Structure probing data (DMS and 2A3) for a 177-nucleotide construct.
DMS adducts were read by reverse transcription with MarathonRT.
For 2A3 the reverse transcriptase was SuperScript II with manganese.
The RNA was probed in 150 mM KOAc, 10 mM MgCl2 and 150 mM bicine (pH 8.5) at 24 C.

RNA sequence: GGGAACGACUCGAGUAGAGUCGAAAACAACAAAACAAAACAUAGGGGAGUCAGGGUUCGGACCCCCUCCCUGAACCUAGGGUAACACUGACUGUGGAGGGGAAAAGAAAGAAAACAAAACAAAACACCUAUCCCUCACUUUCGAGUGAGGGAUAGGAAAAGAAACAACAACAACAAC
Reactivity to DMS in 0.01 (KOAc 150mM, MgCl2 10mM, bicine 150mM(pH8.5), 24C), signal-to-noise 1, nucleotides 027 to 126: c090a040a280c070a160a100a040a010c170a280a000a130a000c150a070u000a270g050g000g030g000a080g000u000c090a040g000g030g000u000u000c040g110g000a260c000c000c000c020c050u000c000c030c050u000g000a030a050c060c010u000a080g030g030g000u090a030a100c030a040c060u000g000a170c010u000g000u000g000g000a000g030g020g040g000a050a130a160a060g130a110a240a160g000a230a010a150a000c130a010a150a030a070c070a030a120a180a090c300a080
Reactivity to 2A3 in 0.01 (KOAc 150mM, MgCl2 10mM, bicine 150mM(pH8.5), 24C), signal-to-noise 2, nucleotides 027 to 126: c010a000a040c030a040a110a020a030c040a060a120a010a000c010a120u140a100g000g020g030g000a080g010u000c000a020g050g000g000u010u040c020g050g110a120c020c000c000c000c000u010c000c000c000u000g020a010a000c010c000u050a000g040g010g080u070a080a020c060a030c050u040g070a000c000u030g100u150g090g000a010g020g030g030g100a040a040a110a030g120a000a030a000g080a000a100a030a000c070a010a050a000a020c050a050a010a120a000c150a010